[RMDB]
RNA sequence: GGGAACGACUCGAGUAGAGUCGAAAAGGGCUCACCCCGGUGGUGGGCUGCGUGGCGGUGGGCGAGGACGGUGAGGCGCUCAAUGUCAACGCUGACACGGUGGCCGGCGCAGUGGCCGGGGCGCUGGCACGCCACCCACUUUCGAGUGGGUGGCGUGAAAAGAAACAACAACAACAAC
Reactivity to DMS in 0.01 (KOAc 150mM, MgCl2 10mM, bicine 150mM(pH8.5), 24C), signal-to-noise 1, nucleotides 027 to 126: g010g010g020c000u010c040a100c000c000c030c180g010g010u040g010g020u070g010g000g020c000u010g000c070g050u020g000g050c090g030g060u010g000g000g020c050g000a070g010g000a000c110g010g000u010g000a300g000g000c060g000c080u030c060a060a080u010g010u020c070a060a140c050g000c040u030g000a180c130a160c110g000g000u000g000g000c000c000g000g000c040g040c120a050g000u030g010g000c000c000g010g000g000g050c060g000c020u020g000g000
Reactivity to 2A3 in 0.01 (KOAc 150mM, MgCl2 10mM, bicine 150mM(pH8.5), 24C), signal-to-noise 2, nucleotides 027 to 126: g050g000g010c010u020c030a030c000c030c000c070g160g030u170g100g050u040g010g050g000c000u020g000c030g040u030g020g000c030g000g010u030g000g030g000c000g020a030g120g020a060c040g040g000u110g050a080g070g030c050g020c030u080c040a030a120u120g010u090c020a110a050c040g050c130u060g060a050c010a010c090g100g020u070g070g010c000c060g030g000c000g000c020a060g040u130g060g000c000c020g000g010g000g000c000g020c030u010g010g010